Notes:
This 207-nucleotide RNA was probed chemically with 2A3 and DMS. The reactions ran in a buffer of 150 mM KOAc, 10 mM MgCl2 and 150 mM bicine (pH 8.5), at 24 C.
[RMDB]
RNA sequence: GGGAACGACUCGAGUAGAGUCGAAAAUGACGAAUUUAGACAUGGUAAAUGAGUAGGUCUAUCACAUUCCGGCCGGUCUUCAUAGAGCCCAAGUUUGAGCACCGGUUCCUGACAGGUAGCUUCCGCUACGGAUACCUAGUACUCUUCGAGCUGGCGGACAUCUUCUCUUUUUCGAAAGAGAAGAUGUAAAAGAAACAACAACAACAAC
Reactivity to 2A3 in 0.01 (KOAc 150mM, MgCl2 10mM, bicine 150mM(pH8.5), 24C), signal-to-noise 6, nucleotides 027 to 156: u110g020a020c050g030a040a040u110u100u090a090g020a020c050a050u090g020g050u130a080a100a080u120g020a050g050u090a070g010g040u000c030u030a070u060c050a040c030a140u110u030c020c010g020g000c010c000g030g000u000c000u090u040c030a060u040a070g090a050g050c020c030c000a030a050g050u040u080u100g020a010g010c030a010c010c010g020g000u070u080c010c010u040g030a040c020a060g010g030u020a010g010c010u100u030c040c050g020c020u050a060c030g030g020a020u030a050c000c000u010a040g030u060a130c030u040c000u090u080c020g030a040g010c020u020g040g010c010g010g010
Reactivity to DMS in 0.01 (KOAc 150mM, MgCl2 10mM, bicine 150mM(pH8.5), 24C), signal-to-noise 4, nucleotides 027 to 156: u000g030a110c050g030a130a100u000u000u010a120g010a100c040a090u010g010g010u000a030a080a090u010g000a130g010u000a050g020g020u000c030u000a080u010c050a090c060a230u000u010c020c030g020g030c020c010g010g020u000c020u000u000c050a110u000a090g010a130g030c050c020c030a050a170g010u000u010u000g010a090g010c060a120c030c010g010g020u000u000c020c020u000g010a120c080a090g020g010u000a050g000c090u000u010c070c050g020c040u000a090c080g020g010a150u000a040c030c000u000a090g020u000a040c020u010c020u000u000c060g010a090g040c030u000g020g020c020g000g000